[RMDB]
RNA sequence: GGGAACGACUCGAGUAGAGUCGAAAAGUACGACAACUUAUUACGCAUCCUCGUACGAUAGAUGCUAAGAUUAGUGGCGAAAGCCACAAGCACGGGCAUUCAUAUGUCAGAUCCGAGAGGAUUUGACGUCCUAGCCUGUGCAAGACUAGGUCAGACAAAUAUCCGCUAGUUUCGACUAGCGGAUAUUAAAAGAAACAACAACAACAAC
Reactivity to 2A3 in 0.01 (KOAc 150mM, MgCl2 10mM, bicine 150mM(pH8.5), 24C), signal-to-noise 3, nucleotides 027 to 156: g060u070a010c050g050a000c060a090a020c120u100u100a020u130u100a160c120g000c000a030u010c010c020u080c040g090u200a070c080g030a030u090a100g010a000u020g010c020u040a060a000g040a130u090u210a020g010u000g000g000c010g050a100a020a010g010c000c000a000c010a030a000g000c000a000c010g010g000g000c010a030u030u090c050a040u180a020u280g000u010c000a000g000a010u000c010c000g050a070g000a030g110g000a000u000u000u000g000a000c000g000u020c000c030u030a020g000c000c000u020g000u010g000c020a020a000g020a020c050u060a030g050g060u040c040a010g000a080c010a030
Reactivity to DMS in 0.01 (KOAc 150mM, MgCl2 10mM, bicine 150mM(pH8.5), 24C), signal-to-noise 2, nucleotides 027 to 156: g040u000a080c030g020a090c050a080a080c080u010u000a130u000u000a170c180g000c030a070u000c020c010u000c060g030u000a100c150g000a070u000a030g000a040u000g000c010u010a060a080g050a170u000u010a130g020u010g020g020c000g020a150a150a300g050c000c000a000c000a050a070g030c000a030c060g000g010g020c030a160u000u010c050a090u000a030u000g000u000c000a040g000a000u000c000c000g010a300g010a300g020g010a020u010u000u000g010a010c000g050u000c080c080u010a120g030c000c000u010g000u000g030c030a050a030g010a120c070u000a070g000g020u000c020a150g010a110c120a080